This 177-nucleotide RNA was probed chemically with 2A3 and DMS. Reactivities are given for positions 27 through 126. The reactions ran in a buffer of 150 mM KOAc, 10 mM MgCl2 and 150 mM bicine (pH 8.5), at 24 C. For DMS the reverse transcriptase was MarathonRT.
[RMDB]
RNA sequence: GGGAACGACUCGAGUAGAGUCGAAAACCUGGGAUCUUCGGAUCCCAGGAAAUAAAAUCAGCGGUAAGCUCCGGUAAAAUUUUACCGCUGAACCGGAGCUUAAAACGGGGUUGUUCGCAACCCCGAACAAAAUACUAUCGUUCGCGAUAGUAUUUUGAAAAGAAACAACAACAACAAC
Reactivity to 2A3 in 0.01 (KOAc 150mM, MgCl2 10mM, bicine 150mM(pH8.5), 24C), signal-to-noise 2, nucleotides 027 to 126: c000c000u000g020g000g000a010u000c030u070u100c170g120g000a000u000c000c000c000a000g010g000a010a010a010u130a010a070a020a110u100c050a020g050c040g130g050u060a020a010g000c000u000c010c010g000g010u050a090a160a110a120u120u300u140u120a020c030c020g000c030u020g010a000a000c010c000g020g000a000g000c020u000u040a020a050a010a100c030g000g000g000g010u010u000g020u070u060c140g030c080a010a010c020c000c000c010g000a000a000
Reactivity to DMS in 0.01 (KOAc 150mM, MgCl2 10mM, bicine 150mM(pH8.5), 24C), signal-to-noise 2, nucleotides 027 to 126: c000c000u010g020g000g010a000u000c010u000u020c170g020g020a010u020c000c000c000a000g000g000a010a040a070u000a070a050a110a120u000c050a050g020c080g000g030u000a020a040g000c010u000c010c040g010g000u000a030a070a100a080u000u030u000u010a090c060c050g020c070u010g010a090a030c030c000g000g000a040g000c010u000u010a000a020a120a150c030g010g010g030g010u000u000g020u000u010c150g000c010a030a010c010c000c010c010g010a010a040